[RMDB]
An RNA of 207 nucleotides, treated with DMS and 2A3 and read out base by base. The reactions ran in a buffer of 150 mM KOAc, 10 mM MgCl2 and 150 mM bicine (pH 8.5), at 24 C. The DMS profile rests on 4,648 reads. Values are in units of 0.01, from 0 to 300, in steps of 10. It was measured as part of the RMDB library M2RFPK.

RNA sequence: GGGAACGACUCGAGUAGAGUCGAAAACACAAUUCUCUAAGCGAUGAGAAGCGUGUGGAUAAUUAGGGAAGGGCUACGGCUAUAAUCCUAAGAAAGCUUAUCUACAAGCGGAGGUAUUCUCAGAACGAAAACCAUUUGGCGUUCGCGCCAAAUGGAAGGAAUAUACAUAGUUCGCUAUGUAUAUUCCAAAAGAAACAACAACAACAAC
Reactivity to DMS in 0.01 (KOAc 150mM, MgCl2 10mM, bicine 150mM(pH8.5), 24C), signal-to-noise 3, nucleotides 027 to 156: c020a060c030a050a140u010u000c010u000c010u000a080a170g000c080g000a300u000g010a050g010a030a060g000c130g010u000g000u000g010g000a080u000a040a060u000u000a070g010g010g000a150a180g010g020g040c040u000a100c180g070g000c020u000a100u020a050a140u010c020c000u020a070a110g020a080a120a170g010c170u000u000a040u000c050u030a060c030a020a040g020c010g010g010a080g010g020u000a120u000u000c030u000c020a090g010a100a080c030g000a060a100a060a190c000c010a040u000u000u000g000g010c000g010u000u000c270g030c000g020c000c000a000a000a000u000g000g000a030a030
Reactivity to 2A3 in 0.01 (KOAc 150mM, MgCl2 10mM, bicine 150mM(pH8.5), 24C), signal-to-noise 6, nucleotides 027 to 156: c080a010c010a030a090u080u010c020u000c000u070a220a120g090c070g100a100u060g010a050g010a040a010g020c030g020u030g010u030g010g010a040u020a090a110u060u060a040g020g010g030a040a080g080g010g000c010u020a010c140g060g000c010u020a050u060a230a070u060c010c010u030a040a030g090a070a110a010g020c020u030u040a030u070c020u030a070c040a100a050g010c030g060g020a050g030g060u080a120u110u020c030u010c020a040g050a110a020c050g040a040a030a040a070c000c000a000u000u000u000g010g000c010g010u020u040c230g010c000g000c070c010a000a000a000u000g000g000a000a010